[RMDB]
RNA sequence: GGGAACGACUCGAGUAGAGUCGAAAAGAUAAGCGCAAGCUUACCGAAACUCAUGUGCAGGCUUUGAAAGCCCGGACCGCAAUAUUCGAGGUUGGCGCAGGCGUCGGUUACCCGAACGAUGGGGAGCGCGAUUAUAAGAAUUCGUUCUUAUAAUCGCAAAAGAAACAACAACAACAAC
Reactivity to 2A3 in 0.01 (KOAc 150mM, MgCl2 10mM, bicine 150mM(pH8.5), 24C), signal-to-noise 9, nucleotides 027 to 126: g040a040u110a040a010g000c020g000c060a070a040g010c020u030u030a040c000c010g020a080a050a040c040u070c050a070u070g010u020g040c040a040g030g000c020u090u110u220g170a170a060a010g010c010c010c010g030g040a030c020c020g040c050a070a090u080a120u170u120c040g020a030g040g020u030u050g040g000c020g000c040a020g050g000c010g030u050c010g020g020u030u070a070c010c000c010g020a070a030c060g040a070u150g010g000g010g020a020g050c070
Reactivity to DMS in 0.01 (KOAc 150mM, MgCl2 10mM, bicine 150mM(pH8.5), 24C), signal-to-noise 9, nucleotides 027 to 126: g000a100u010a030a020g010c000g000c230a080a130g000c010u000u010a030c020c010g000a090a090a100c050u010c050a100u010g010u000g010c040a100g000g000c020u010u010u010g000a080a110a120g000c020c020c040g020g000a080c080c080g010c060a080a080u010a090u020u020c050g000a050g000g020u000u020g010g010c040g020c030a050g000g000c110g010u010c020g010g000u010u010a080c040c010c020g020a080a080c100g000a080u010g010g000g000g010a110g020c200